[RMDB]
RNA sequence: GGGAACGACUCGAGUAGAGUCGAAAAAUGGAUGCUUGGAAUGAAGGUUCUCGAAGAUAUGUAAACGAUGAUGUCGAGUUUUACCUUCCUAACAUUGAUGAAUGGAGAAGUGCUCCAGAGAACUCCAAACAGGGAUCAGGUAAGCCAUUGCCAGAAGGCAGAUACUCACUUUCGAGUGAGUAUCUGCAAAAGAAACAACAACAACAAC
Reactivity to DMS in 0.01 (KOAc 150mM, MgCl2 10mM, bicine 150mM(pH8.5), 24C), signal-to-noise 1, nucleotides 027 to 156: a120u040g040g010a080u000g010c020u010u010g040g000a190a080u000g010a120a010g000g000u010u000c000u000c030g010a090a120g010a120u000a040u000g010u000a090a170a120c160g020a130u020g000a090u000g030u000c000g030a090g020u020u010u000u020a000c070c020u000u000c010c120u000a050a170c070a100u040u000g000a180u000g010a150a090u000g010g030a120g000a120a100g010u000g040c010u030c010c050a080g000a070g000a030a120c070u000c060c040a060a070a080c030a060g020g000g030a180u000c010a050g000g010u010a030a100g010c010c000a200u000u000g020c060c070a270g020a160a160g040
Reactivity to 2A3 in 0.01 (KOAc 150mM, MgCl2 10mM, bicine 150mM(pH8.5), 24C), signal-to-noise 3, nucleotides 027 to 156: a000u040g010g030a020u020g000c000u010u000g020g040a200a150u090g040a050a040g020g000u030u020c020u020c030g010a060a010g080a110u160a030u160g090u140a090a150a120c190g070a100u170g040a050u100g080u050c010g010a010g000u020u040u030u160a030c010c010u030u020c010c000u050a100a000c010a070u040u200g040a030u070g030a180a080u040g010g010a030g000a220a000g120u070g040c010u010c030c020a000g020a000g010a060a020c010u010c010c010a090a020a050c060a020g030g010g040a040u050c010a000g060g000u090a130a010g020c040c030a000u050u060g060c020c030a030g080a100a030g100
The record gives the reactivity of an RNA of 207 nucleotides to DMS and 2A3. For 2A3, 1,402 sequencing reads were counted. Reactivities are given for positions 27 through 156. The reactions ran in a buffer of 150 mM KOAc, 10 mM MgCl2 and 150 mM bicine (pH 8.5), at 24 C.